[RMDB]
Chemical mapping of a 207-nucleotide RNA with 2A3. It was measured as part of the RMDB library RNAMAK.

RNA sequence: GGGAACGACUCGAGUAGAGUCGAAAAGGGGUCUUCUGGGAACUCGUGUUGUCAGCUCACACAGCUGAAGCCUCCACGGCUGUGAAAUGAGCUUGGAUUUACACGAGGGAACAGAAGACGGAGGCACCCAAAAUCCUUCCCGUUCGCGGGAAGGAAACGUAGUCCAAUAGUUCGCUAUUGGACUACGAAAAGAAACAACAACAACAAC
Reactivity to 2A3 in 0.01 (KOAc 150mM, MgCl2 10mM, bicine 150mM(pH8.5), 24C), signal-to-noise 1, nucleotides 027 to 156: g040g010g060g010u000c020u000u000c000u010g010g010g020a040a030c010u000c000g000u000g010u030u030g030u060c050a020g000c000u000c010a010c000a000c000a000g010c000u010g050a090a060g020c010c020u040c010c030a050c020g000g000c000u000g010u020g080a240a220a130u080g000a000g010c000u000u100g080g010a040u180u140u180a020c000a000c000g010a000g000g000g010a010a000c000a000g000a010a000g000a000c000g000g000a000g000g000c010a040c000c010c030a060a000a070a100u030c010c000u000u000c030c020c000g010u070u060c300g010c010g050g000g000a000a030g010g000a000a000a000